Chemical mapping of a 177-nucleotide RNA with 2A3 and DMS. For DMS the reverse transcriptase was MarathonRT. The 2A3 profile rests on 3,275 reads. The reactions ran in a buffer of 150 mM KOAc, 10 mM MgCl2 and 150 mM bicine (pH 8.5), at 24 C. 2A3 adducts were read by reverse transcription with SuperScript II with manganese.

RNA sequence: GGGAACGACUCGAGUAGAGUCGAAAAGCUCUGUGGAUCCUUUAGGAACUGAGCCUCAUGGCUGGCUCCAGCUUUGGCCUGACCCCAUGUGGAAAAAGCUGUCAUAUCUGUUCCUGCUGCCAUGGGACCCUCAGUCAUGAUUCGUCAUGACUGAGGGAAAAGAAACAACAACAACAAC
Reactivity to 2A3 in 0.01 (KOAc 150mM, MgCl2 10mM, bicine 150mM(pH8.5), 24C), signal-to-noise 3, nucleotides 027 to 126: g000c000u020c020u060g060u090g130g060a140u060c030c020u070u150u290a180g010g020a070a110c050u050g020a010g000c010c000u020c020a070u130g040g000c080u080g030g000c020u030c060c010a020g010c000u040u020u020g020g010c010c010u050g080a200c000c000c000c070a100u190g070u180g040g010a060a070a000a000a000g020c030u040g030u130c030a100u090a090u220c090u100g020u040u000c000c000u010g010c040u050g000c010c010a020u010g000g030g030a050
Reactivity to DMS in 0.01 (KOAc 150mM, MgCl2 10mM, bicine 150mM(pH8.5), 24C), signal-to-noise 2, nucleotides 027 to 126: g020c030u000c030u000g000u000g010g000a120u010c040c020u000u030u010a130g010g010a040a090c030u010g010a010g020c050c000u010c080a040u000g010g020c040u000g020g000c010u000c090c030a030g020c020u000u000u000g000g000c040c010u000g000a210c070c030c010c040a080u010g000u010g000g000a020a060a030a030a020g000c020u000g020u020c120a060u000a060u000c090u000g010u000u000c000c000u000g030c090u010g000c060c010a050u020g010g010g010a280